[RMDB]
RNA sequence: GGGAACGACUCGAGUAGAGUCGAAAAGAUAUGGACGUCUAGGGAGCUCAGUAGUCGGAAACGACUACGAGCUUUGAUCUAGAACGUCCUAAGUCAAAACCUUCCAAGCCUUCGGGCUUGGAAGGAACAUAAGAUCUCCGUUCGCGGAGAUCUUAUGAAAAGAAACAACAACAACAAC
Reactivity to 2A3 in 0.01 (KOAc 150mM, MgCl2 10mM, bicine 150mM(pH8.5), 24C), signal-to-noise 1, nucleotides 027 to 126: g000a000u030a040u080g010g010a010c000g000u000c000u000a000g020g010g010a020g030c010u020c090a110g010u020a000g010u010c000g020g000a050a000a000c000g000a000c000u010a030c000g000a010g000c000u060u120u030g010a010u000c010u010a010g080a280a050c000g000u000c000c000u010a000a010g000u020c000a000a030a160a300c030c010u000u010c000c000a020a010g000c010c030u190u270c300g170g010g000c000u000u020g010g030a000a010g000g000a000a010
Reactivity to DMS in 0.01 (KOAc 150mM, MgCl2 10mM, bicine 150mM(pH8.5), 24C), signal-to-noise 2, nucleotides 027 to 126: g000a020u000a030u020g000g010a030c000g020u000c000u000a010g000g020g010a010g010c000u000c010a150g010u000a000g010u000c000g030g000a020a020a050c000g010a000c000u010a000c000g000a020g010c000u000u010u020g000a020u000c000u010a000g000a070a040c000g010u000c000c000u000a000a080g000u020c010a160a110a160a240c020c000u000u000c000c010a000a000g020c010c000u000u000c300g030g000g050c000u000u000g000g000a000a010g000g010a020a040
This 177-nucleotide RNA was probed chemically with 2A3 and DMS. High 2A3 reactivity points to a flexible backbone, as in loops and unpaired stretches. 2A3 adducts were read by reverse transcription with SuperScript II with manganese. It was measured as part of the RMDB library TTRDES. The 2A3 profile rests on 2,392 reads.